[RMDB]
RNA sequence: GGGAACGACUCGAGUAGAGUCGAAAAUCCCGGGGAACUCGGCGAAUCGUCCCCACAUAGCAGUUCCCAGGACCCCCUUCUAAAAUGACCGAGAGGGGGUGCUAGGAACACGGGGGCCCAGUGGAGCGACGCCACCGCUUCGGCGGUGGCAAAAGAAACAACAACAACAAC
Reactivity to 2A3 in 0.01 (KOAc 150mM, MgCl2 10mM, bicine 150mM(pH8.5), 24C), signal-to-noise 2, nucleotides 027 to 129: u020c000c010c010g000g000g040g000a080a020c090u020c040g070g050c030g040a070a080u070c050g000u030c000c000c000c000a010c000a000u190a000g100c100a010g000u000u000c000c000c000a000g070g000a000c000c000c010c020c000u090u040c020u140a130a130a170a080u200g080a130c080c070g050a060g030a000g140g000g010g000g000u000g040c010u000a000g000g000a020a000c000a010c090g010g000g000g050g000c010c000c010a030g000u000g020g000a080g040c050g060a020c050
Reactivity to DMS in 0.01 (KOAc 150mM, MgCl2 10mM, bicine 150mM(pH8.5), 24C), signal-to-noise 4, nucleotides 027 to 129: u000c010c030c020g010g000g070g020a110a070c040u000c020g260g000c120g070a110a160u010c180g020u040c040c000c070c030a140c230a060u020a070g070c250a020g000u010u020c020c000c060a070g000g040a030c000c000c000c010c010u050u030c020u030a000a050a150a160u090g000a140c200c190g000a080g020a000g060g030g010g040g000u000g010c040u010a080g000g050a000a060c060a080c090g000g000g000g000g000c000c020c110a070g000u020g060g000a050g060c040g050a050c230

Source information
An RNA of 170 nucleotides, treated with 2A3 and DMS and read out base by base. DMS adducts were read by reverse transcription with MarathonRT. The 2A3 profile rests on 3,077 reads. As a SHAPE reagent, 2A3 marks flexible, mostly unpaired nucleotides at the ribose 2'-OH. It was measured as part of the RMDB library 15KLIB. Values cover nucleotides 27 to 129. 2A3 adducts were read by reverse transcription with SuperScript II with manganese.